[RMDB]
RNA sequence: GGGAACGACUCGAGUAGAGUCGAAAAUGCGCCGUUAUCUUCUCCGGCUUGCGUGCAUGCUGCCUUCCGCAAAGCUGCAGCGCGGCGCUCUGGAGGCCUUGCCCCGCGCACUGCUCUUUACAUGGCCAUAGAAUGAUCUAUUCGUAGAUCAUUCUAUAAAAGAAACAACAACAACAAC
Reactivity to DMS in 0.01 (KOAc 150mM, MgCl2 10mM, bicine 150mM(pH8.5), 24C), signal-to-noise 9, nucleotides 027 to 126: u010g010c040g010c010c030g010u000u010a070u010c070u000u010c030u000c060c030g010g010c090u000u000g010c040g020u010g020c070a070u010g010c040u000g000c040c050u010u000c080c070g000c090a050a070a090g010c060u010g000c070a060g010c150g010c020g000g000c090g010c020u010c050u010g010g000a100g010g000c040c030u000u000g010c030c030c020c050g020c060g010c040a080c070u000g010c030u000c030u000u000u000a090c100a070u010g010g010c040c080
Reactivity to 2A3 in 0.01 (KOAc 150mM, MgCl2 10mM, bicine 150mM(pH8.5), 24C), signal-to-noise 9, nucleotides 027 to 126: u100g000c020g000c010c010g050u070u090a100u110c080u140u010c020u030c020c010g020g010c010u020u070g020c010g030u060g040c020a050u110g020c020u050g010c010c020u060u070c030c030g020c050a060a070a060g020c040u050g010c040a050g030c010g000c010g030g000c010g000c000u010c020u030g050g020a020g020g000c000c010u020u070g030c000c000c010c020g010c000g010c010a030c040u040g010c010u010c000u040u080u050a070c050a100u110g060g000c020c010